The data come from the RNA Mapping Database (RMDB), library OK3TST. This 207-nucleotide RNA was probed chemically with DMS and 2A3. The DMS profile rests on 1,503 reads.
RNA sequence: GGGAACGACUCGAGUAGAGUCGAAAACUGUGGGAGGCCAAGAUGGGUGAAUUUCUUGAGCUGAAGAUCAGCUUGGACCACAGAGCAAAACCCUGCCUCUACUAAAAAUACGAAAACUAGCUGGGUGUGCACAUCUGUAGUCCUGGCUACUUGGGAACCUGGUAGUUUUAUUCGUAAAACUACCAGGAAAAGAAACAACAACAACAAC
Reactivity to DMS in 0.01 (KOAc 150mM, MgCl2 10mM, bicine 150mM(pH8.5), 24C), signal-to-noise 1, nucleotides 027 to 156: c010u010g000u000g000g010g020a140g040g020c060c030a120a100g010a070u000g040g000g010u020g000a040a130u000u010u000c070u000u000g020a070g040c100u000g020a080a130g000a170u000c040a000g050c050u000u000g010g030a000c000c060a060c040a050g010a090g020c070a070a060a110a180c010c010c010u020g000c040c060u000c040u000a130c110u040a000a160a080a120a230u000a180c120g000a190a110a140a140c040u020a080g000c000u020g000g080g050u020g000u010g100c070a080c080a090u000c060u010g060u000a040g020u000c020c010u000g010g000c010u000a040c030u000u000g040g000g010a070a200
Reactivity to 2A3 in 0.01 (KOAc 150mM, MgCl2 10mM, bicine 150mM(pH8.5), 24C), signal-to-noise 2, nucleotides 027 to 156: c000u010g000u060g040g010g050a080g020g020c040c060a050a020g010a060u070g010g020g080u120g030a060a070u050u080u090c030u040u070g020a050g010c020u050g040a080a010g040a100u130c060a010g000c000u030u020g000g000a020c000c000a000c000a020g000a020g030c000a000a090a110a060c000c000c000u020g030c010c010u050c040u090a140c060u120a110a030a100a030a040u180a070c050g100a020a050a090a090c060u040a030g010c000u030g000g000g020u010g030u060g030c030a020c000a190u060c040u010g000u000a020g020u010c000c000u000g010g000c000u020a050c030u030u070g070g000g030a010a030